The record gives the reactivity of an RNA of 177 nucleotides to DMS and 2A3.
Values cover nucleotides 27 to 126.
[RMDB]
RNA sequence: GGGAACGACUCGAGUAGAGUCGAAAAACGACUAGCGAUCAUAGUCAUGCGGUACGCUAGGAUCGCCAUGGUACGGAUCCUACUGGAUCCUAGCUACAGCUCUAGGUACGAUCCUAGGUCUCCAUGCAACCUCCCUCGUAUUCGUACGAGGGAGGUUAAAAGAAACAACAACAACAAC
Reactivity to DMS in 0.01 (KOAc 150mM, MgCl2 10mM, bicine 150mM(pH8.5), 24C), signal-to-noise 2, nucleotides 027 to 126: a050c140g000a140c000u000a000g030c110g020a090u000c060a140u020a070g010u010c040a070u000g000c050g010g020u000a030c170g010c000u000a000g000g010a000u000c010g000c160c120a060u000g020g010u010a220c260g010g000a080u000c020c050u000a080c190u010g000g000a010u000c010c000u010a010g000c010u020a060c130a070g020c060u000c090u010a060g010g000u000a070c130g000a010u000c000c010u000a010g010g000u000c020u000c010c030a100u000g020c150
Reactivity to 2A3 in 0.01 (KOAc 150mM, MgCl2 10mM, bicine 150mM(pH8.5), 24C), signal-to-noise 2, nucleotides 027 to 126: a000c110g040a020c000u020a020g030c080g150a050u070c000a090u070a050g040u040c030a050u160g040c040g020g010u030a020c070g000c070u030a000g000g010a030u000c020g060c130c020a080u150g040g050u080a090c130g090g080a070u140c000c020u070a150c110u110g080g000a000u010c010c000u020a000g000c010u020a030c020a040g020c010u040c060u130a040g000g070u060a060c110g010a020u030c020c000u000a000g030g020u020c020u000c000c020a040u090g040c020